RNA sequence: GGGAACGACUCGAGUAGAGUCGAAAACCACAAUUACCACAAUCACUUAUUAUUACAAGUAUCGGAUGCAAAACACGGCAAGGCAUGCCAUACCAAUGAGAAUAUAUAACGAGGUGAGGAAGAAGAAUCAGUCCAUCGUAUUCGUACGAUGGACUGAAAAAGAAACAACAACAACAAC
Reactivity to DMS in 0.01 (KOAc 150mM, MgCl2 10mM, bicine 150mM(pH8.5), 24C), signal-to-noise 1, nucleotides 027 to 126: c020c000a210c300a050a060u000u020a060c050c090a080c120a140a080u000c060a010c050u020u000a060u000u000a050u000u000a070c090a060a100g020u000a000u000c190g000g000a080u000g050c000a040a030a200a070c090a050c080g010g000c020a040a060g010g040c000a040u010g000c010c020a020u000a020c060c120a050a010u000g000a110g010a020a040u020a010u010a060u030a050a060c110g000a020g020g040u000g000a060g020g020a110a040g000a070a130g020a080a120
Reactivity to 2A3 in 0.01 (KOAc 150mM, MgCl2 10mM, bicine 150mM(pH8.5), 24C), signal-to-noise 1, nucleotides 027 to 126: c000c010a010c030a070a150u130u120a100c040c040a040c040a080a080u060c000a010c060u040u090a020u100u020a060u040u070a160c050a080a090g000u020a020u080c060g000g060a010u050g050c050a070a000a020a070c050a040c010g070g000c020a000a010g080g030c010a020u020g070c000c000a020u020a010c000c010a040a010u070g020a100g000a120a000u080a010u000a000u020a170a000c050g010a040g040g000u000g020a030g050g040a060a060g010a050a010g010a000a060

The record gives the reactivity of an RNA of 177 nucleotides to DMS and 2A3. Reactivities are rounded to 0.1 and cut off at 0 and 3. The RNA was probed in 150 mM KOAc, 10 mM MgCl2 and 150 mM bicine (pH 8.5) at 24 C. Values cover nucleotides 27 to 126. It was measured as part of the RMDB library OK2TST. 2A3 adducts were read by reverse transcription with SuperScript II with manganese. For DMS, 706 sequencing reads were counted.